[RMDB]
RNA sequence: GGGAACGACUCGAGUAGAGUCGAAAACGAUGCCGCGAUCCAGAUGGCAUACGCCAAUCAGGUGAUCGUGGUGCCCGGCUACGGGUUGGCCGUCGCGCAGGCGCAGCAUGCGGUGAAGGACCUGGCAGUGCGUAGCUAUCUUCGGAUAGCUACGCACAAAAGAAACAACAACAACAAC
Reactivity to DMS in 0.01 (KOAc 150mM, MgCl2 10mM, bicine 150mM(pH8.5), 24C), signal-to-noise 1, nucleotides 027 to 126: c120g040a180u010g010c000c000g050c000g000a000u010c020c000a100g000a000u000g000g000c000a210u070a060c170g000c020c000a000a070u000c000a160g010g120u040g000a000u000c000g000u020g010g020u000g000c020c020c000g000g010c050u000a040c010g000g000g010u040u000g000g010c020c000g000u000c030g000c030g100c080a050g000g000c060g010c090a020g000c110a010u000g030c060g000g010u000g000a080a090g000g000a070c020c030u000g000g000c080a190
Reactivity to 2A3 in 0.01 (KOAc 150mM, MgCl2 10mM, bicine 150mM(pH8.5), 24C), signal-to-noise 3, nucleotides 027 to 126: c080g070a090u240g030c020c000g000c000g000a020u030c010c020a040g020a010u000g000g000c030a100u220a120c080g000c010c000a070a210u030c000a060g090g130u230g130a010u000c000g000u000g000g000u010g010c000c000c000g010g000c030u110a060c040g070g040g000u080u130g110g020c000c000g040u030c020g000c010g010c050a070g070g000c040g020c110a010g010c000a030u120g000c040g000g010u080g030a020a040g100g000a040c050c050u060g050g020c040a050